[RMDB]
RNA sequence: GGGAACGACUCGAGUAGAGUCGAAAAGACGUGGAGGUUACGCGCCCUCCUUUGCGCGUAAGUACGUCGAAAUUCGGUGCUUGGGAUCGCACCGUUUGAUCCAUUUGAUAUCCGCUUUGUGCCGCGGUUGGGCAUUUACACUUACCCGAAAGGGGAACCCUCACCGUAGUUUCGACUACGGUGAGGGAAAAGAAACAACAACAACAAC
Reactivity to 2A3 in 0.01 (KOAc 150mM, MgCl2 10mM, bicine 150mM(pH8.5), 24C), signal-to-noise 2, nucleotides 027 to 156: g000a000c050g000u050g000g060a120g120g210u030u020a010c000g000c000g000c060c030c000u300c000c060u100u100u140g020c020g010c000g020u010a000a040g060u020a020c000g000u000c010g020a050a000a030u020u010c000g010g000u010g000c030u120u170g100g160g030a110u090c040g000c010a020c040c000g000u000u000u010g030a010u070c000c000a080u130u090u220g230a070u060a060u080c020c040g000c060u110u010u060g050u030g050c020c000g030c040g110g000u060u020g030g020g060c010a010u090u070u260a080c130a030c000u080u150a090c000c000c020g050a060a050a050g010g000g010g010a010a030
Conditions: 150 mM KOAc, 10 mM MgCl2 and 150 mM bicine (pH 8.5), 24 C.
Chemical mapping of a 207-nucleotide RNA with 2A3.
2A3 adducts were read by reverse transcription with SuperScript II with manganese.